[RMDB]
RNA sequence: GGGAACGACUCGAGUAGAGUCGAAAAGAUAUGGAGCACUCGCGAUAAGAACUUAUUCGGAAACGAAUAACAUGUUCUUUUGACGCGAAACUCCUAAGUCAAAGGGUCCUUCUUCGGAAGGACCCAAUCUCCAAUUAUUCUUCGGAAUAAUUGGAGAAAAAGAAACAACAACAACAAC
Reactivity to DMS in 0.01 (KOAc 150mM, MgCl2 10mM, bicine 150mM(pH8.5), 24C), signal-to-noise 5, nucleotides 027 to 126: g000a020u010a300u000g000g020a020g040c070a130c240u000c000g020c000g020a160u000a020a020g000a020a000c000u000u000a010u000u000c010g010g000a100a070a150c000g000a000a010u000a010a060c300a140u000g010u000u000c000u000u000u000u010g040a180c060g000c000g010a000a060a160c000u000c000c000u020a030a090g010u010c030a070a080a120g000g000g000u010c000c000u000u000c000u000u000c200g020g010a000a010g010g000a000c000c010c000a000a000
Reactivity to 2A3 in 0.01 (KOAc 150mM, MgCl2 10mM, bicine 150mM(pH8.5), 24C), signal-to-noise 3, nucleotides 027 to 126: g000a000u070a020u110g000g000a000g000c060a050c200u020c010g000c030g020a050u050a240a040g000a010a010c010u020u000a010u010u010c000g000g000a050a050a050c020g020a010a000u020a030a020c100a210u220g020u000u010c000u000u090u070u140g160a060c020g000c000g000a020a030a030c000u010c000c000u000a100a010g040u030c070a110a050a080g020g000g000u020c010c010u010u010c010u040u090c300g120g000a000a000g000g000a000c000c000c000a000a010